[RMDB]
RNA sequence: GGGAACGACUCGAGUAGAGUCGAAAAGAUAUGGAAUGAGAGAGGAGCUUGGUGUCGGAAACGACACCCAAGCAAUGGUGGGAUACUCUCCAUUCCUAAGUCAAAAUCCGGGACUUCGGUCCCGGAAGUGACUAUAAAUCUUCGGAUUUAUAGUCACAAAAGAAACAACAACAACAAC
Reactivity to DMS in 0.01 (KOAc 150mM, MgCl2 10mM, bicine 150mM(pH8.5), 24C), signal-to-noise 3, nucleotides 027 to 126: g000a020u000a000u010g000g000a020a010u010g010a290g010a010g000a040g000g020a060g050c000u000u000g000g020u000g010u020c000g030g010a010a010a000c010g020a010c000a010c250c100c070a020a000g020c000a300a080u000g030g040u010g000g010g000a300u020a070c010u010c000u010c000c000a020u010u000c010c000u000a000a030g000u000c000a200a090a160a180u000c000c010g000g000g000a020c010u000u000c260g040g010u000c000c010c000g000g010a000a020
Reactivity to 2A3 in 0.01 (KOAc 150mM, MgCl2 10mM, bicine 150mM(pH8.5), 24C), signal-to-noise 3, nucleotides 027 to 126: g000a000u010a000u040g010g010a010a000u060g020a070g000a000g000a010g300g030a210g050c010u000u000g000g010u000g010u000c000g000g000a010a000a000c000g010a000c000a020c060c080c010a000a010g010c000a000a030u180g100g060u260g070g130g020a020u050a100c000u000c000u000c000c000a000u010u000c000c000u000a000a000g000u010c000a040a030a000a250u020c000c010g010g000g000a010c040u050u100c300g160g010u010c020c030c000g000g000a010a010